[RMDB]
About this RNA: Conditions: 150 mM KOAc, 10 mM MgCl2 and 150 mM bicine (pH 8.5), 24 C. Chemical mapping of a 177-nucleotide RNA with 2A3 and DMS. 2A3 adducts were read by reverse transcription with SuperScript II with manganese. The DMS profile rests on 3,216 reads.
RNA sequence: GGGAACGACUCGAGUAGAGUCGAAAAAAGAAGAGAGUGAUACCACAAUAUAUUAAAUGCGAUCUGAUAAUGCUUAUGGGAAUGUUUAAUCAUUCCUCAACCACUCUACACAUCUGGCCAGCAUAUGCUGAGAUAACAGGUUCGCCUGUUAUCUCAGAAAAGAAACAACAACAACAAC
Reactivity to 2A3 in 0.01 (KOAc 150mM, MgCl2 10mM, bicine 150mM(pH8.5), 24C), signal-to-noise 4, nucleotides 027 to 126: a000a000g120a030a030g070a010g000a010g010u050g000a010u060a110c020c020a030c040a080a030u140a010u050a030u200u220a090a120a060u070g000c020g020a030u020c030u070g050a040u060a180a060u110g040c040u100u100a060u140g000g020g020a000a000u000g020u040u190u250a150a140u180c000a000u000u020c000c000u000c000a020a020c010c010a020c020u000c000u030a050c070a000c000a060u030c030u030g060g070c040c010a020g030c020a080u080a050u270g050
Reactivity to DMS in 0.01 (KOAc 150mM, MgCl2 10mM, bicine 150mM(pH8.5), 24C), signal-to-noise 4, nucleotides 027 to 126: a080a080g020a090a080g010a090g000a100g020u000g000a090u000a100c100c050a060c070a050a080u020a080u010a070u020u010a030a070a070u000g000c060g000a040u000c070u010g010a160u000a040a030u000g010c090u010u000a080u000g010g000g000a010a000u010g010u000u010u000a140a070u010c010a010u000u000c000c000u000c190a070a070c100c040a050c020u000c030u020a080c070a120c090a060u000c050u000g010g000c030c030a070g010c110a060u000a050u010g000